[RMDB]
RNA sequence: GGGAACGACUCGAGUAGAGUCGAAAAACGGUCAUAUACGUAUGACCGAAUGAGCAUAACAGGGCCACCCCAAAGCGUUCACAUUGUGGCCCCUGUCAGAUUCUGGUAAAUCUGCGAGUACUGCUAAAUUAGGUAACUCUCUUCGGAGAGUUACCAAUCAUUGAUCUGGCUUCGGCCAGAUCAAUGAAAAAGAAACAACAACAACAAC
Reactivity to 2A3 in 0.01 (KOAc 150mM, MgCl2 10mM, bicine 150mM(pH8.5), 24C), signal-to-noise 1, nucleotides 027 to 156: a000c000g010g010u000c000a000u030a000u020a030c210g090u040a020u020g000a000c020c000g020a000a070u020g000a020g000c030a020u070a190a000c000a020g010g000g030c010c000a050c000c010c070c000a140a000a090g210c120g090u170u220c090a070c010a200u090u130g000u000g070g000c030c000c020c000u020g040u070c000a000g000a020u050u070c030u260g000g110u160a070a080a080u010c000u020g020c010g030a050g110u080a000c140u070g000c020u010a000a180a210u190u110a090g020g000u000a000a000c000u000c000u000c000u040u050c130g050g000a000g000a000g010u000u000a000c000c000a010a000